[RMDB]
RNA sequence: GGGAACGACUCGAGUAGAGUCGAAAAAAAAAGGGUUGAUGCCAUGCUUGGUACUCAUGUAGUUUGGGACGUGGGGCUACAAUCAAGUUGCGUGCUGUGUAUACCCUGGAUAAGCCAAACACACUACCCGGUAAUUAACAUUCGUGUUAAUUACCGGAAAAGAAACAACAACAACAAC
Reactivity to 2A3 in 0.01 (KOAc 150mM, MgCl2 10mM, bicine 150mM(pH8.5), 24C), signal-to-noise 2, nucleotides 027 to 126: a010a010a000a030a040g120g000g000u090u040g040a070u110g060c020c000a020u100g020c030u050u030g020g000u070a050c020u000c020a010u050g010u020a140g000u050u020u020g050g000g010a020c030g020u030g010g010g000g010c020u070a030c050a040a020u110c030a020a000g030u040u080g150c130g070u110g000c040u060g010u010g000u060a020u040a090c000c000c010u000g010g030a120u100a110a000g040c010c000a010a030a010c020a000c010a020c040u110a080c030
Reactivity to DMS in 0.01 (KOAc 150mM, MgCl2 10mM, bicine 150mM(pH8.5), 24C), signal-to-noise 3, nucleotides 027 to 126: a010a050a110a140a030g000g000g000u000u000g020a080u010g000c030c020a050u000g020c020u000u000g010g020u010a050c080u000c030a050u000g030u000a080g010u000u000u000g000g000g010a040c060g030u000g010g010g010g010c150u000a080c300a100a030u010c060a020a040g000u000u000g030c130g010u000g000c020u000g010u010g000u000a070u010a030c010c010c010u010g000g010a140u010a070a080g010c000c010a050a020a040c030a070c130a080c200u000a110c190
Structure probing data (2A3 and DMS) for a 177-nucleotide construct. DMS adducts were read by reverse transcription with MarathonRT. The DMS profile rests on 3,923 reads.